RNA sequence: GGGAACGACUCGAGUAGAGUCGAAAAGAUAUGGAGUGUAGGGAGUUGUUGUCGGAAACGACAAUACAACGAAGAACUAUAUACUCCUAAGUCAAAAGCGGUAUUUUCGUUCGCGAAAAUACCGCAACAAUACAUACGCGUUCGCGCGUAUGUAUUGAAAAGAAACAACAACAACAAC
Reactivity to DMS in 0.01 (KOAc 150mM, MgCl2 10mM, bicine 150mM(pH8.5), 24C), signal-to-noise 5, nucleotides 027 to 126: g000a010u000a010u010g000g000a020g040u000g000u000a000g000g000g010a020g010u000u010g010u000u000g000u000c000g020g000a000a010a020c000g010a010c000a020a090u030a110c080a010a010c010g010a070a170g010a080a220c000u000a010u010a060u020a040c000u000c000c000u000a000a090g000u000c010a070a070a120a120g010c000g000g000u000a000u000u000u000u000c000g010u010u010c260g010c010g000a010a000a000a000u000a000c000c000g020c000a000a020
Reactivity to 2A3 in 0.01 (KOAc 150mM, MgCl2 10mM, bicine 150mM(pH8.5), 24C), signal-to-noise 4, nucleotides 027 to 126: g000a010u010a000u050g000g000a010g020u010g000u010a000g010g000g010a000g000u000u010g010u010u010g000u000c000g010g000a000a000a000c010g020a000c010a000a010u270a150c010a010a000c010g200a300a030g000a000a000c000u000a000u010a020u100a100c000u000c000c000u000a000a010g000u000c000a010a020a110a140g000c000g000g000u010a010u000u010u010u000c020g020u020u140c300g010c000g120a010a000a000a000u000a000c010c000g000c000a000a000